[RMDB]
RNA sequence: GGGAACGACUCGAGUAGAGUCGAAAAGGCUGCGGAAAAGCGUCUGUGAUAAGGGAGGGAAAUGACAGACGCGAAGAAAGUGUCAGACGAAUAACCCCUCCCAGUCUGACACCGCUGCGAAAAGAAAGGGUUAACAUUAGUUCGCUAAUGUUAACCCAAAAGAAACAACAACAACAAC
Reactivity to DMS in 0.01 (KOAc 150mM, MgCl2 10mM, bicine 150mM(pH8.5), 24C), signal-to-noise 3, nucleotides 027 to 126: g000g000c030u000g010c020g040g010a100a010a140a170g030c010g020u000c000u030g000u000g000a110u000a220a110g010g020g000a040g000g000g000a060a090a060u030g010a080c020a030g000a000c000g000c000g000a050a100g000a070a060a070g040u010g000u000c000a010g000a000c020g020a060a060u060a110a220c100c010c020c030u000c000c020c010a060g000u000c000u000g000a020c000a060c000c040g020c010u000g000c000g020a040a190a080a130g000a110a060a090
Reactivity to 2A3 in 0.01 (KOAc 150mM, MgCl2 10mM, bicine 150mM(pH8.5), 24C), signal-to-noise 4, nucleotides 027 to 126: g140g000c000u010g020c010g020g040a010a000a190a030g000c000g010u010c000u030g080u020g120a150u040a140a020g000g010g000a030g000g010g030a120a210a060u180g040a010c000a010g000a010c010g010c020g010a010a000g100a020a150a010g060u060g020u010c000a000g000a010c030g070a140a030u150a180a100c010c000c010c000u000c000c000c000a000g010u000c000u000g000a000c000a000c010c010g000c020u130g000c000g070a090a050a010a010g180a020a090a020